[RMDB]
RNA sequence: GGGAACGACUCGAGUAGAGUCGAAAACAACUCGUUUGUGUCGGUAUUUGUCAGUGCAGGUGAAGUCGGUCUGCCCUCCAAGCCACUGUUUGUAGGAGAACCAGCUUGCGAGUCCUCCACUAAGGUAGUACUCCCAUUAGUUCGCUAAUGGGAGUACAAAAGAAACAACAACAACAAC
Reactivity to 2A3 in 0.01 (KOAc 150mM, MgCl2 10mM, bicine 150mM(pH8.5), 24C), signal-to-noise 2, nucleotides 027 to 126: c030a000a030c010u030c090g050u030u070u070g140u040g010u050c060g040g000u060a090u070u080u100g080u040c040a060g010u020g040c020a010g000g040u050g110a090a060g040u020c020g040g000u000c050u050g020c010c000c010u010c020c000a060a030g030c020c020a110c060u090g050u070u070u060g080u070a060g000g110a080g000a070a040c020c000a000g060c060u070u080g000c020g030a040g000u010c010c000u040c000c020a050c060u160a150a020g000g000u000a020
Reactivity to DMS in 0.01 (KOAc 150mM, MgCl2 10mM, bicine 150mM(pH8.5), 24C), signal-to-noise 4, nucleotides 027 to 126: c110a070a100c060u000c060g010u010u010u000g020u000g010u000c060g030g010u000a070u010u000u010g010u010c060a060g030u000g000c040a050g000g010u010g010a070a070g000u000c040g010g010u000c040u000g020c070c020c020u010c030c060a040a090g000c030c100a090c080u000g000u000u000u000g010u010a110g000g000a090g000a070a070c020c080a110g020c050u000u000g010c070g010a100g020u000c010c010u000c020c020a070c100u020a060a070g020g000u010a090